[RMDB]
RNA sequence: GGGAACGACUCGAGUAGAGUCGAAAAAUGACAGGCUGUACAAAAAGGCCUACAACGACCACAAAGCCAAGAUCUCCAUCCCUGUGGACAUGGUGUCCAUCAGCGCUGCCAAAGAAGGUCAGGCACUGGCAAGUGAUGUGGACUAUCGCCAUUACCAUGAUACUACUCCGUUCGCGGAGUAGUAUCAAAAAGAAACAACAACAACAAC
Reactivity to DMS in 0.01 (KOAc 150mM, MgCl2 10mM, bicine 150mM(pH8.5), 24C), signal-to-noise 1, nucleotides 027 to 156: a100u000g000a090c080a230g020g010c040u000g010u000a300c080a140a110a060a180a090g020g000c030c020u010a040c100a050a120c110g000a030c030c010a070c060a080a090a100g010c020c030a070a130g140a100u000c010u000c030c030a180u010c000c000c000u000g010u010g050g000a040c040a170u000g050g020u000g020u010c000c000a100u000c010a070g030c000g000c010u000g010c010c010a080a040a240g000a160a050g010g000u000c020a140g010g040c000a060c080u000g010g030c010a050a070g030u000g000a120u010g000u020g020g030a100c050u010a100u000c020g020c060c060a060u000u000a030c010c000a270
Reactivity to 2A3 in 0.01 (KOAc 150mM, MgCl2 10mM, bicine 150mM(pH8.5), 24C), signal-to-noise 3, nucleotides 027 to 156: a000u180g030a040c050a010g000g020c030u060g020u240a070c140a000a160a010a010a020g050g010c020c000u040a030c040a030a040c060g070a060c020c010a040c090a100a040a030g040c040c010a060a030g000a100u030c040u020c030c020a080u040c030c020c000u050g040u060g060g010a030c020a070u080g070g000u100g000u040c010c000a040u120c050a000g020c050g000c040u040g000c000c010a050a040a150g080a100a000g070g050u080c100a020g060g000c030a030c060u010g000g000c020a080a060g020u020g010a060u030g030u020g020g000a010c010u080a060u160c110g000c000c000a010u030u050a030c010c000a040

Source: RMDB library OK3TST, as collected in RNAgym. Structure probing data (DMS and 2A3) for a 207-nucleotide construct. DMS adducts were read by reverse transcription with MarathonRT. The DMS profile rests on 1,799 reads.